[RMDB]
RNA sequence: GGGAACGACUCGAGUAGAGUCGAAAAGUAGUCUUCGGACUACAAGAUGCGUACUACGUAGACAUGUCGUCCACACGGGAGAAGCUCCCAAAUAGGAGCUUCAUCGAUCGUGUGGGCGACAACAGCUACGUAUCGCUGACAGAGGCUUCGGCCUCAAUAUAUAGAAGAGAUUCGUCUCUUCUAUAUAAAAAGAAACAACAACAACAAC
Reactivity to 2A3 in 0.01 (KOAc 150mM, MgCl2 10mM, bicine 150mM(pH8.5), 24C), signal-to-noise 3, nucleotides 027 to 156: g010u010a000g000u000c000u000u050c300g090g020a000c000u000a000c000a000a020g090a060u140g000c010g040u050a110c040u010a010c060g000u000a000g040a030c030a090u030g000u010c000g010u000c010c000a000c000a010c000g030g000g010a020g000a000a000g000c010u010c000c070c010a190a190a000u300a100g000g000a000g030c000u020u030c020a100u230c000g060a050u030c000g000u010g000u000g000g000g000c000g020a000c000a000a000c000a000g010c000u000a000c000g000u000a010u050c020g000c000u010g020a030c050a120g030a000g010g020c010u100u130c300g090g000c010c000u010c000a000a000
Reactivity to DMS in 0.01 (KOAc 150mM, MgCl2 10mM, bicine 150mM(pH8.5), 24C), signal-to-noise 4, nucleotides 027 to 156: g030u000a000g000u000c000u000u000c300g050g010a020c000u030a020c000a030a070g020a100u000g020c010g050u010a070c200u000a010c000g030u000a020g010a070c030a300u000g010u000c000g010u000c000c000a020c010a020c010g000g010g010a090g010a030a020g030c010u000c000c000c020a030a100a140u000a020g010g000a020g030c000u000u000c000a070u000c130g010a050u000c000g020u010g030u010g000g010g010c000g020a000c010a000a020c070a150g000c000u000a020c010g000u000a010u000c000g010c010u000g000a300c090a070g000a030g010g020c010u000u010c250g040g010c010c000u000c000a010a050
Structure probing data (2A3 and DMS) for a 207-nucleotide construct. Source: RMDB library RNAMAK, as collected in RNAgym. Values cover nucleotides 27 to 156.